[RMDB]
RNA sequence: GGGAACGACUCGAGUAGAGUCGAAAAGAGUCCAGUAUAGAGUCAGAAAUAGUAUCAGGAAUGACUACUCCUAGGAUGCUUCUACCUGUUAUGUCAAAAUUCCAUAAUGACCAAAUUGAGAUUAUUCCUAAUUGUUCAAGUUCGCUUGAACAAUUAGAAAAGAAACAACAACAACAAC
Reactivity to DMS in 0.01 (KOAc 150mM, MgCl2 10mM, bicine 150mM(pH8.5), 24C), signal-to-noise 6, nucleotides 027 to 126: g010a070g000u000c010c030a040g010u020a060u040a030g000a140g010u000c020a070g000a080a140a090u030a080g020u000a090u020c080a050g000g030a170a110u010g010a050c040u020a080c060u000c170c030u010a070g030g000a050u020g000c060u010u010c050u000a110c030c010u000g000u000u000a040u020g020u010c050a030a050a060a100u000u000c060c050a040u020a090a070u010g000a070c040c110a050a070a100u010u010g000a110g010a060u030u020a080u010u000c050
Reactivity to 2A3 in 0.01 (KOAc 150mM, MgCl2 10mM, bicine 150mM(pH8.5), 24C), signal-to-noise 9, nucleotides 027 to 126: g070a010g040u010c010c010a000g030u010a090u070a070g060a020g030u030c030a010g120a100a150a030u190a060g120u090a080u170c070a040g070g070a060a090u070g040a060c030u060a070c020u040c000c000u030a060g070g020a030u050g040c020u070u040c010u050a100c010c000u030g050u110u070a070u110g050u040c040a050a050a080a150u110u040c040c000a050u080a120a060u140g040a030c020c030a020a090a140u100u130g030a060g030a100u080u100a070u190u060c000